[RMDB]
RNA sequence: GGGAACGACUCGAGUAGAGUCGAAAAGCCGUGCUCGAGAGGGAGCAGAAAAUGCAGAGCUAUCCCGUCGUUACGCUAAACAAAUGCGAAACGACAAAUUGCGUUACAUACGCAAUCCUCUAAUGAACUCACAGGUGUGCUUCGGCACACCUGUGAGAAAAGAAACAACAACAACAAC
Reactivity to 2A3 in 0.01 (KOAc 150mM, MgCl2 10mM, bicine 150mM(pH8.5), 24C), signal-to-noise 1, nucleotides 027 to 126: g050c020c000g080u050g000c000u000c020g100a090g000a020g010g120g080a020g000c040a010g130a030a260a030a020u260g000c050a020g030a060g120c050u090a030u040c020c000c010g010u000c010g000u000u000a050c020g000c020u090a170a270a140c070a100a070a010u140g000c000g000a080a030a000c000g000a000c000a000a090a000u040u000g010c000g000u090u080a290c140a150u300a020c040g010c060a000a040u040c000c000u000c000u000a040a110u170g040a090a050
Chemical mapping of a 177-nucleotide RNA with 2A3. For 2A3, 678 sequencing reads were counted.